Background
An RNA of 207 nucleotides, treated with 2A3 and DMS and read out base by base. For DMS, 1,826 sequencing reads were counted. Values are in units of 0.01, from 0 to 300, in steps of 10. For 2A3 the reverse transcriptase was SuperScript II with manganese. The RNA was probed in 150 mM KOAc, 10 mM MgCl2 and 150 mM bicine (pH 8.5) at 24 C. Source: RMDB library ARCHII, as collected in RNAgym. Values cover nucleotides 27 to 156.
RNA sequence: GGGAACGACUCGAGUAGAGUCGAAAAUGAGGCCGUAUUUUUGCGAAGUCUGCCCAAAGCACGUAGUGUUUGAAGAUUUCGGUCCUAUGCAAUAUGAACCCAUGAACCAUGUCAGGUCCUGACGGAAGCAGCAUUAAGUGGAUCAUCAUAUGUGCCGGACAAUCGAUUACUUCGGUAAUCGAUUGUCAAAAGAAACAACAACAACAAC
Reactivity to 2A3 in 0.01 (KOAc 150mM, MgCl2 10mM, bicine 150mM(pH8.5), 24C), signal-to-noise 2, nucleotides 027 to 156: u190g000a030g000g000c020c020g060u050a200u050u300u050u080u150g070c010g020a060a000g050u000c000u040g060c030c000c020a040a030a000g030c030a020c120g270u220a080g080u060g000u070u070u090g100a060a030g010a040u010u010u100c050g030g000u040c010c000u090a100u190g030c010a010a080u030a010u080g000a010a020c000c000c000a010u050g030a040a030c090c050a050u040g030u070c020a000g030g020u030c000c030u090g060a060c120g010g000a010a010g000c000a010g000c010a010u060u060a100a020g010u020g020g010a000u050c020a030u000c000a000u030a020u050g050u080g050c000c030g060
Reactivity to DMS in 0.01 (KOAc 150mM, MgCl2 10mM, bicine 150mM(pH8.5), 24C), signal-to-noise 1, nucleotides 027 to 156: u000g010a070g030g040c010c060g060u010a080u000u000u000u000u000g090c000g050a080a100g000u000c010u000g000c040c010c050a100a120a080g000c010a010c060g020u000a150g040u000g050u000u010u010g050a020a090g020a080u000u000u000c020g040g040u000c030c010u000a150u000g050c060a150a000u000a070u000g000a060a200c050c000c050a070u010g010a120a180c090c100a220u000g000u000c190a300g050g010u000c010c000u000g010a170c140g010g000a110a130g000c140a090g050c050a050u000u000a040a240g000u010g000g000a060u000c020a140u020c020a040u010a050u010g020u010g010c000c120g000